An RNA of 207 nucleotides, treated with DMS and 2A3 and read out base by base. It was measured as part of the RMDB library OK3TST. For 2A3 the reverse transcriptase was SuperScript II with manganese. For DMS, 2,117 sequencing reads were counted.

RNA sequence: GGGAACGACUCGAGUAGAGUCGAAAAUAUUGUGAGAUCCAAUCGUCAUUAAGUACAUAUAAUUCUACAUACAUCUGUUACAAUCUAACGGUAACUGCAGACGCUAGCAACGCAACUAAUCCUUUAAUAACUACCACGAAAUGCCAUGUCACCAGAACGUUACUGAGAAGUUCGCUUCUCAGUAACGAAAAGAAACAACAACAACAAC
Reactivity to DMS in 0.01 (KOAc 150mM, MgCl2 10mM, bicine 150mM(pH8.5), 24C), signal-to-noise 2, nucleotides 027 to 156: u010a050u000u000g020u010g020a080g020a090u000c030c050a030a150u020c100g040u030c060a110u000u000a050a110g010u000a070c070a130u000a090u000a070a140u010u010c040u000a000c070a100u000a090c040a090u000c010u000g010u000u000a070c070a140a140u000c200u000a070a040c060g020g030u000a070a110c110u010g030c090a110g000a070c030g020c020u000a110g040c060a050a040c040g000c000a080a080c020u000a040a100u000c010c020u000u010u010a060a160u000a040a080c040u000a080c030c010a070c060g010a100a110a060u030g050c030c030a100u010g000u000c030a100c070c000a100g010a110a220
Reactivity to 2A3 in 0.01 (KOAc 150mM, MgCl2 10mM, bicine 150mM(pH8.5), 24C), signal-to-noise 4, nucleotides 027 to 156: u160a030u030u100g020u030g050a030g010a060u010c000c010a010a060u070c040g060u020c060a090u080u180a140a070g040u080a070c030a040u160a030u050a120a150u190u030c100u100a110c030a050u120a020c010a080u040c020u090g060u070u030a030c030a030a160u050c060u130a070a060c050g010g010u020a020a060c010u040g010c030a020g020a040c040g000c050u010a010g020c020a040a040c040g020c040a010a020c050u070a090a080u080c010c010u040u080u040a040a070u040a050a030c010u050a110c020c030a030c040g050a100a040a000u060g020c020c010a070u060g030u070c000a020c070c030a020g030a070a020